[RMDB]
An RNA of 177 nucleotides, treated with 2A3 and DMS and read out base by base. For 2A3, 1,877 sequencing reads were counted. For DMS, 1,890 sequencing reads were counted. It was measured as part of the RMDB library OK2TST.
RNA sequence: GGGAACGACUCGAGUAGAGUCGAAAAAUGACGGGCAUCUCGCACCCGUCCGAUCUGCCCGCCGCCGACGCGGACGCGAUCGCCGACGAGAUCGUCGAGUGGGUGAACCUGCUCGGCCUCGCGGGCAAUAGGUAGCCAUGUUCGCAUGGCUACCUAUAAAAGAAACAACAACAACAAC
Reactivity to 2A3 in 0.01 (KOAc 150mM, MgCl2 10mM, bicine 150mM(pH8.5), 24C), signal-to-noise 2, nucleotides 027 to 126: a000u070g010a010c030g010g010g010c030a120u050c100u090c120g020c040a060c020c000c010g000u020c000c020g000a080u010c020u090g030c000c000c020g000c010c030g060c050c070g050a110c120g020c040g030g000a020c000g030c040g040a090u060c020g050c030c010g030a080c020g010a020g050a180u140c090g000u000c000g010a040g040u040g030g090g000u150g150a110a190c000c010u060g000c010u010c010g000g010c000c010u020c040g000c000g040g000g000c000a000
Reactivity to DMS in 0.01 (KOAc 150mM, MgCl2 10mM, bicine 150mM(pH8.5), 24C), signal-to-noise 2, nucleotides 027 to 126: a060u020g020a000c000g010g000g000c120a070u000c130u010c130g040c110a270c000c000c000g000u000c030c140g030a030u010c030u010g000c000c000c030g000c000c180g010c070c080g010a080c290g000c000g010g010a050c070g020c090g000a030u000c010g040c050c010g000a070c040g010a170g000a100u000c110g020u000c010g000a060g020u000g020g010g000u000g020a120a110c040c000u000g010c000u000c000g000g000c000c000u010c070g010c010g010g000g020c160a050